[RMDB]
RNA sequence: GGGAACGACUCGAGUAGAGUCGAAAAUUUACAAAACAUACUUUGAGAAGGUUGAAAGGUUAAAACAUGGAACCUUUGGUCCCGUUCAUUUCCGAAACCAAGUUAAAAUACGCCGCCGAGUUGAUAUAAAUCCUGGCCAUGCAGAUCUCAGUGCUAACAUUAUUAGGCUAUUCGUAGCCUAAUAAUGAAAAGAAACAACAACAACAAC
Reactivity to 2A3 in 0.01 (KOAc 150mM, MgCl2 10mM, bicine 150mM(pH8.5), 24C), signal-to-noise 1, nucleotides 027 to 156: u020u050u030a060c030a000a120a070a010c030a030u250a070c040u060u110u100g040a070g010a090a130g010g010u060u130g010a150a050a040g030g040u080u120a130a120a020a020c050a020u120g070g000a020a050c010c000u000u010u110g060g000u000c060c000c020g000u030u020c040a050u120u050u000c070c030g060a060a020a000c050c000a040a040g000u030u030a110a090a030a030u030a020c020g020c050c010g040c050c060g030a030g060u040u020g130a070u040a000u000a130a120a030u050c000c010u020g000g010c000c020a030u110g000c000a000g000a110u000c020u010c050a060g010u060g090c010u070a040a010
Reactivity to DMS in 0.01 (KOAc 150mM, MgCl2 10mM, bicine 150mM(pH8.5), 24C), signal-to-noise 2, nucleotides 027 to 156: u010u010u000a240c030a090a130a080a150c020a140u000a030c040u000u010u020g030a140g050a090a110g000g040u010u010g000a030a090a090g000g010u000u000a020a070a060a090c080a050u010g020g000a060a020c000c010u000u020u000g020g010u010c010c000c010g000u010u010c050a200u010u000u000c040c010g020a150a060a070c050c060a050a090g000u000u000a040a010a070a150u000a050c030g010c020c110g020c040c020g010a100g040u000u010g040a160u000a050u000a060a060a070u000c000c010u000g000g030c000c040a140u000g000c020a070g030a140u000c020u000c020a050g010u000g010c030u020a090a250